RNA sequence: GGGAACGACUCGAGUAGAGUCGAAAAUUUGUCAGAGGUGAUAAGAAUUCCUGAAGACGAUCUCAUUUUGGCGGGGGCAGUCACCAUAGCCUUAAGCGUAGGUCAAAGACUAAUCUCAGAAGUUCAGCUCACAAAAUAGGUUCGCCUAUUUUGUGAGAAAAGAAACAACAACAACAAC
Reactivity to 2A3 in 0.01 (KOAc 150mM, MgCl2 10mM, bicine 150mM(pH8.5), 24C), signal-to-noise 2, nucleotides 027 to 126: u020u030u100g060u040c020a020g020a050g110g070u110g090a070u090a250a080g090a090a150u080u020c010c000u040g060a090a030g030a030c050g030a060u030c040u000c040a030u070u130u080u060g050g040c080g000g020g010g000g020c000a020g050u030c000a010c070c000a010u040a020g030c020c000u010u020a030a000g090c010g060u050a010g070g000u080c050a030a030a020g000a030c000u060a020a100u070c010u020c040a100g050a190a010g110u120u080c040a020g080
Reactivity to DMS in 0.01 (KOAc 150mM, MgCl2 10mM, bicine 150mM(pH8.5), 24C), signal-to-noise 3, nucleotides 027 to 126: u000u000u000g020u010c010a060g020a190g000g010u010g020a070u000a070a180g020a120a170u000u000c040c010u000g000a120a150g000a070c090g010a040u010c020u040c030a150u010u000u020u000g020g010c050g010g000g010g020g040c110a070g020u000c070a050c050c010a070u020a110g000c030c010u000u000a070a060g030c140g000u000a030g020g000u000c030a050a080a100g010a060c070u020a130a140u000c020u000c020a070g000a150a100g020u000u000c030a100g020